[RMDB]
RNA sequence: GGGAACGACUCGAGUAGAGUCGAAAAUAACAUGCCAGACACAAUAGGUAGAGCUGUAAAUAGCGGUAAGCCAACACCAUCUUGUAAUUCUUGGAAUGUUGCACCAGUACCACCUUCACCACCAUCAUCUAGACGUACAUUUCGAUGUACGUCUAGAAAAAGAAACAACAACAACAAC
Reactivity to DMS in 0.01 (KOAc 150mM, MgCl2 10mM, bicine 150mM(pH8.5), 24C), signal-to-noise 4, nucleotides 027 to 126: u000a080a080c100a060u010g000c030c020a070g000a090c210a060c060a070a050u010a120g010g020u010a070g000a150g010c020u000g020u000a060a090a110u000a070g020c080g030g000u000a110a110g000c030c020a050a040c060a040c050c020a070u010c100u000u010g000u000a070a090u000u000c020u000u010g010g000a050a030u000g010u000u000g000c050a060c040c020a060g010u000a050c050c030a050c060c050u000u000c040a080c050c040a050c060c030a060u000c110a110
Reactivity to 2A3 in 0.01 (KOAc 150mM, MgCl2 10mM, bicine 150mM(pH8.5), 24C), signal-to-noise 3, nucleotides 027 to 126: u070a010a030c040a030u070g030c010c000a010g040a050c050a010c000a020a120u030a080g030g020u050a020g020a030g120c020u030g080u180a060a090a180u100a090g040c060g050g070u070a060a010g020c030c010a010a010c030a020c020c010a050u050c020u090u070g080u140a140a140u140u050c070u030u070g060g010a090a040u080g050u030u030g020c060a020c000c010a010g000u020a040c010c020a010c030c030u080u060c050a050c050c030a030c000c010a060u130c010a010
Chemical mapping of a 177-nucleotide RNA with DMS and 2A3. The DMS profile rests on 3,584 reads.